Description:
This 177-nucleotide RNA was probed chemically with DMS. For DMS the reverse transcriptase was MarathonRT. It was measured as part of the RMDB library RFMREP. The RNA was probed in 150 mM KOAc, 10 mM MgCl2 and 150 mM bicine (pH 8.5) at 24 C.
RNA sequence: GGGAACGACUCGAGUAGAGUCGAAAAAACGCUAAGGCGAGGAAAUGUUCAUAGUGUAAGGAGAGCGGGAACUGGAAAACGCCUCGCUUUUUUCCUGUAAAACACCGCAACGCAGGAAAAGCGCAUGGAUGUACCGUAAGUUCGCUUACGGUACAUCAAAAGAAACAACAACAACAAC
Reactivity to DMS in 0.01 (KOAc 150mM, MgCl2 10mM, bicine 150mM(pH8.5), 24C), signal-to-noise 2, nucleotides 027 to 126: a030a060c010g000c010u000a130a110g000g030c020g000a020g000g020a090a130a050u000g010u000u000c050a260u020a050g020u020g000u000a160a060g030g010a140g000a090g010c000g000g030g030a090a060c030u020g000g000a070a070a030a020c070g020c050c000u000c000g010c000u000u000u000u000u000u000c000c000u000g000u020a060a050a100a100c130a160c040c030g000c050a100a130c160g000c000a020g030g000a010a020a050a060g010c000g010c110a060u020g000